[RMDB]
RNA sequence: GGGAACGACUCGAGUAGAGUCGAAAAGAAAGAAAGAAGCCUAUGAUGAUAAAAACAAUUAUCUUAGCGGAUUUCAGUGAGGUUUUUUUAAAAUCAAUGAUCUGAAUUGUUACACACACUGAGGCAAAAUAGGAGUUUUAUUCGUAAAACUCCUAUUAAAAGAAACAACAACAACAAC
Reactivity to DMS in 0.01 (KOAc 150mM, MgCl2 10mM, bicine 150mM(pH8.5), 24C), signal-to-noise 2, nucleotides 027 to 126: g000a130a150a120g000a120a040a140g010a260a270g010c050c060u000a060u020g000a050u010g000a080u010a040a120a140a080a050c050a060a050u010u000a030u000c000u000u010a080g000c110g000g000a090u010u010u020c020a000g020u000g010a090g000g000u000u000u010u000u040u010u050a060a020a040a030u010c010a050a110u010g010a100u010c030u000g000a050a060u010u000g000u010u020a060c120a080c150a040c030a020c020u010g000a050g010g020c060a040a040
Reactivity to 2A3 in 0.01 (KOAc 150mM, MgCl2 10mM, bicine 150mM(pH8.5), 24C), signal-to-noise 3, nucleotides 027 to 126: g040a010a030a030g060a020a070a020g110a100a010g030c010c000u040a120u090g050a080u020g000a000u060a140a200a080a030a020c040a010a050u070u030a040u070c010u030u070a020g020c030g100g060a090u030u170u040c010a010g040u050g040a110g070g050u050u020u060u020u050u100u260a040a040a020a010u040c030a010a030u070g030a040u040c010u020g010a040a040u020u020g020u070u130a040c070a010c000a000c000a000c080u020g010a020g010g020c000a130a130